[RMDB]
RNA sequence: GGGAACGACUCGAGUAGAGUCGAAAAGAGCCGUGAGAGAGCAGGGAUGAAGGCUCUCAGGAAAGCGUGCUGGCUAAGGAAGCACACCGGCACCAUGGGGAGGACCUGCGAGAAGGGUCCCUGCAGCUAACAUAGAUCCAUUCGUGGAUCUAUGUUAAAAAGAAACAACAACAACAAC
Reactivity to DMS in 0.01 (KOAc 150mM, MgCl2 10mM, bicine 150mM(pH8.5), 24C), signal-to-noise 9, nucleotides 027 to 126: g010a110g020c010c020g030u010g010a170g010a130g000a120g010c010a030g010g010g010a040u000g000a150a150g000g010c010u000c000u010c010a030g020g000a070a070a120g010c100g030u000g000c000u000g000g010c100u010a110a100g000g000a100a080g020c040a100c240a100c010c000g000g010c000a030c010c020a170u010g000g000g000g010a150g000g000a160c010c000u000g000c140g000a050g000a060a060g000g000g000u000c000c000c010u000g000c020a150g000c190
Reactivity to 2A3 in 0.01 (KOAc 150mM, MgCl2 10mM, bicine 150mM(pH8.5), 24C), signal-to-noise 5, nucleotides 027 to 126: g050a010g060c030c040g040u160g040a170g000a020g010a020g020c010a010g000g020g010a010u050g070a070a020g110g020c000u000c000u000c010a010g050g050a110a100a020g090c080g050u010g000c000u000g020g010c050u110a070a100g070g050a210a070g060c060a010c010a010c060c010g010g000c000a010c020c010a070u170g030g000g000g000a050g030g020a050c000c010u020g000c040g010a020g000a030a020g100g070g000u010c000c000c000u000g000c010a030g020c030